[RMDB]
RNA sequence: GGGAACGACUCGAGUAGAGUCGAAAAUGGGCCGCUUCCGGCAAGAGGGGCCGAAAGUGUGAAGGGAGAGACCGCUCCGAGAGUUGGGAGAAGAAAGAGAGCGAAUGUGUCCGGAGGGAACCCCCAAUAACUAAGCGCUUCGGCGCUUAGAAAAGAAACAACAACAACAAC
Reactivity to DMS in 0.01 (KOAc 150mM, MgCl2 10mM, bicine 150mM(pH8.5), 24C), signal-to-noise 3, nucleotides 027 to 129: u030g070g010g070c090c060g100c150u000u000c020c060g010g010c060a080a120g000a040g000g000g000g000c020c030g010a060a010a100g050u070g050u050g010a160a160g040g020g010a020g070a130g030a200c160c040g060c140u040c060c050g000a100g010a030g060u000u020g020g070g050a140g000a030a050g000a030a140a060g080a150g030a070g020c060g010a100a040u050g020u040g010u010c050c060g070g000a090g010g010g010a120a180c000c000c000c000c000a100a040u070a070a120
Reactivity to 2A3 in 0.01 (KOAc 150mM, MgCl2 10mM, bicine 150mM(pH8.5), 24C), signal-to-noise 2, nucleotides 027 to 129: u000g030g000g000c050c000g100c010u010u000c000c030g090g000c000a010a000g040a000g100g040g000g000c020c020g090a040a000a000g210u170g020u040g080a060a010g080g030g010a000g030a020g000a030c020c030g050c050u000c020c010g010a000g040a000g070u070u080g010g000g000a000g000a000a030g000a000a030a000g050a030g000a000g010c000g040a110a120u120g000u030g010u030c010c020g010g000a070g040g010g000a000a000c030c000c000c000c040a000a040u130a000a010